[RMDB]
RNA sequence: GGGAACGACUCGAGUAGAGUCGAAAAAAGGAACAAUGAUCACACUCUGUAGCUCAAAUGAUGCCAGAACCUGGAACCAAGGGCAUUACACCACUAAGUUUGCAUUCUUGAUGUGUGAGCUCCUGCCAGUUCGGAGUGUGUUCGCACACUCCGAACUAAAAGAAACAACAACAACAAC
Reactivity to 2A3 in 0.01 (KOAc 150mM, MgCl2 10mM, bicine 150mM(pH8.5), 24C), signal-to-noise 3, nucleotides 027 to 126: a000a020g140g020a100a050c120a110a080u300g040a040u160c020a000c000a000c020u030c040u030g020u060a040g000c020u000c020a070a080a150u260g130a020u120g010c000c010a010g040a110a060c000c000u140g060g120a070a000c120c000a080a110g050g000g040c030a010u100u120a070c030a020c020c040a090c040u020a050a040g070u060u270u230g060c040a040u170u010c010u080u200g050a160u260g010u000g000u020g010a000g030c000u000c000c030u000g020c000c050
Reactivity to DMS in 0.01 (KOAc 150mM, MgCl2 10mM, bicine 150mM(pH8.5), 24C), signal-to-noise 1, nucleotides 027 to 126: a070a070g020g000a060a050c160a110a210u000g030a000u000c060a040c000a080c000u020c080u010g000u050a030g000c000u000c040a090a030a020u000g050a000u040g000c100c070a060g000a000a050c050c010u080g000g070a140a070c090c030a150a020g000g000g000c000a120u000u030a010c070a050c020c030a160c070u000a050a070g030u000u030u060g000c060a020u020u040c000u080u040g010a090u000g000u040g030u000g000a030g060c020u000c020c000u000g090c110c000